[RMDB]
RNA sequence: GGGAACGACUCGAGUAGAGUCGAAAAGUAAAGGUCGGAUUCUUUCCGGAGAGUCCCGCUCCUUCAGGUGAACGAUCUCGGUUGUUUCUCUGAAGGCAUGAUCACCCCGUCCGAUGCGGAAGUUCGUCUAUCCAGUAAAGUUCGCUUUACUGGAUAGAAAAGAAACAACAACAACAAC
Reactivity to DMS in 0.01 (KOAc 150mM, MgCl2 10mM, bicine 150mM(pH8.5), 24C), signal-to-noise 2, nucleotides 027 to 126: g030u020a030a080a110g010g000u000c300g030g000a050u000u000c020u000u000u000c160c080g010g000a020g000a030g000u000c000c010c080g000c060u010c000c000u010u000c010a000g010g010u020g010a020a020c010g000a010u000c020u010c300g000g020u000u000g010u000u000u000c010u010c000u000g000a020a020g020g000c190a060u000g000a060u000c070a150c040c010c000c010g000u010c040c070g000a110u000g000c050g030g010a080a100g010u010u000c060g000u010
Reactivity to 2A3 in 0.01 (KOAc 150mM, MgCl2 10mM, bicine 150mM(pH8.5), 24C), signal-to-noise 3, nucleotides 027 to 126: g050u070a050a050a060g050g010u040c020g010g000a010u030u000c010u040u080u040c120c170g070g010a000g000a000g020u020c050c000c010g000c030u020c000c000u000u000c000a030g050g020u080g080a010a000c020g000a020u000c000u060c180g160g000u030u020g010u010u110u020c010u000c000u000g000a020a000g000g000c010a050u150g020a030u080c030a110c020c000c010c000g060u030c020c030g080a090u160g060c020g040g070a060a050g050u040u050c010g000u000
The data come from the RNA Mapping Database (RMDB), library RFMREP. Structure probing data (DMS and 2A3) for a 177-nucleotide construct. For 2A3, 3,791 sequencing reads were counted. Conditions: 150 mM KOAc, 10 mM MgCl2 and 150 mM bicine (pH 8.5), 24 C. Reactivities are given for positions 27 through 126. The DMS profile rests on 1,896 reads.